Chemical mapping of a 207-nucleotide RNA with 2A3 and DMS. Reactivities are given for positions 27 through 156.

RNA sequence: GGGAACGACUCGAGUAGAGUCGAAAAACAUACAGGAUAGGAGGUUGCCAACCUCCCCUGAGGUAACCUCCGAAACUCUACGGGGAUAGCUUCUCUCCUCCUGCCUGUGGGAAAGAGAGAAGCGAAACUCAAACACAGGCUAAGCAUGUAGAUGCCCGACACUAAUAGUCUUCGGACUAUUAGUGUCAAAAGAAACAACAACAACAAC
Reactivity to 2A3 in 0.01 (KOAc 150mM, MgCl2 10mM, bicine 150mM(pH8.5), 24C), signal-to-noise 3, nucleotides 027 to 156: a000c030a010u300a040c050a080g120g030a110u130a080g000g000a010g010g000u000u010g000c000c000a000a030c010c080u000c000c010c000c000u010g000a000g000g010u020a010a010c040c000u000c000c000g000a010a030a010c120u150c100u080a040c200g010g020g000g000a000u020a000g000c000u000u000c000u000c000u010c000c000u000c000c000u000g000c000c000u010g000u000g010g000g000a000a040a000g000a000g000a000g000a000a000g000c000g000a010a000a000c060u080c140a000a030a010c010a000c000a000g020g000c000u000a000a000g000c000a010u050g080u120a040g020a190u060g000c040c090c080
Reactivity to DMS in 0.01 (KOAc 150mM, MgCl2 10mM, bicine 150mM(pH8.5), 24C), signal-to-noise 1, nucleotides 027 to 156: a150c070a060u010a230c110a240g000g000a150u000a090g020g010a000g030g040u010u000g020c070c070a100a300c010c070u000c010c000c000c040u010g010a250g000g020u000a040a050c010c010u010c000c010g000a130a070a040c060u020c100u010a300c060g000g000g000g000a100u000a120g000c010u020u000c010u020c010u010c000c000u040c020c020u020g000c040c010u000g040u000g010g030g010a010a090a030g000a020g000a000g000a020a000g030c010g010a040a030a070c100u010c110a090a080a040c000a050c020a000g030g000c050u000a040a060g010c010a010u000g000u000a080g010a130u010g020c020c030c000